[RMDB]
RNA sequence: GGGAACGACUCGAGUAGAGUCGAAAAGUAAACAGGUUGAGUAGAGUGUGAGCCGCUGCGAUACCAGCUCGAUUACGAGCCCUUGGCAGCGCGUCGGAAGGACGGGUCCCUGAUUAUAAAAAAGUAACCCGAAGGGUACAUUCGUGUACCCUUCGGGAAAAGAAACAACAACAACAAC
Reactivity to DMS in 0.01 (KOAc 150mM, MgCl2 10mM, bicine 150mM(pH8.5), 24C), signal-to-noise 1, nucleotides 027 to 126: g020u000a050a060a090c090a080g000g000u010u010g000a080g000u000a080g020a090g000u000g010u000g000a100g000c050c020g000c020u020g000c010g000a070u000a090c070c110a170g000c000u000c000g010a300u030u020a070c120g010a010g010c000c080c080u000u000g000g010c000a040g010c030g020c100g000u020c020g000g000a070a060g000g000a030c020g000g010g000u000c030c000c020u000g010a060u010u000a080u030a010a020a020a060a050a090g040u020a050a130

An RNA of 177 nucleotides, treated with DMS and read out base by base. For DMS, 1,007 sequencing reads were counted. The data come from the RNA Mapping Database (RMDB), library M2PK90. DMS adducts were read by reverse transcription with MarathonRT.